[RMDB]
Structure probing data (2A3 and DMS) for a 207-nucleotide construct. For 2A3, 1,349 sequencing reads were counted. 2A3 is a SHAPE reagent: it acylates the 2'-hydroxyl of flexible nucleotides of all four kinds. 2A3 adducts were read by reverse transcription with SuperScript II with manganese. For DMS, 3,057 sequencing reads were counted. The reactions ran in a buffer of 150 mM KOAc, 10 mM MgCl2 and 150 mM bicine (pH 8.5), at 24 C.
RNA sequence: GGGAACGACUCGAGUAGAGUCGAAAAGAUUCGGCGGCCCUGUCACGAGGCCGAAACGAAGGCACGUACCCCUUCGAAUGGCGUCGGGGAGUCAGCGGCUAUAUAUGCGCCUAAUGCUGGCAUCCGGGAGAACCCUCAUCCUUCGGGAUGAGGGUAAGUCUUAAAAGUGGUUCGCCACUUUUAAGACAAAAGAAACAACAACAACAAC
Reactivity to 2A3 in 0.01 (KOAc 150mM, MgCl2 10mM, bicine 150mM(pH8.5), 24C), signal-to-noise 2, nucleotides 027 to 156: g070a040u120u070c050g060g010c010g040g000c030c020c030u040g100u020c040a040c070g040a060g040g020c030c010g010a020a020a000c010g000a010a010g000g020c080a010c180g180u190a100c010c010c010c010u020u000c020g050a110a060u080g040g020c060g100u010c000g020g020g020g030a110g020u050c010a000g000c050g050g000c060u000a010u010a020u050a010u260g150c080g020c010c000u080a140a050u190g050c030u010g000g020c020a050u040c020c010g020g020g010a100g030a020a060c000c000c010u020c000a000u010c000c000u050u060c080g080g010g000a000u000g000a040g000g000g010u000a000a000
Reactivity to DMS in 0.01 (KOAc 150mM, MgCl2 10mM, bicine 150mM(pH8.5), 24C), signal-to-noise 2, nucleotides 027 to 156: g000a250u000u000c050g030g010c010g000g070c010c020c020u020g030u000c030a090c100g000a090g060g020c000c000g010a010a020a100c050g020a050a010g010g030c080a190c120g020u000a230c060c030c020c010u000u000c040g000a090a130u000g010g000c010g010u000c000g030g020g020g010a110g020u000c040a040g020c060g050g010c000u000a070u010a070u000a050u000g000c000g050c020c030u000a090a160u010g030c040u010g020g000c040a060u010c000c000g000g040g000a240g020a140a130c000c000c000u010c020a000u000c020c010u000u000c300g050g030g010a000u000g020a000g010g000g010u000a000a040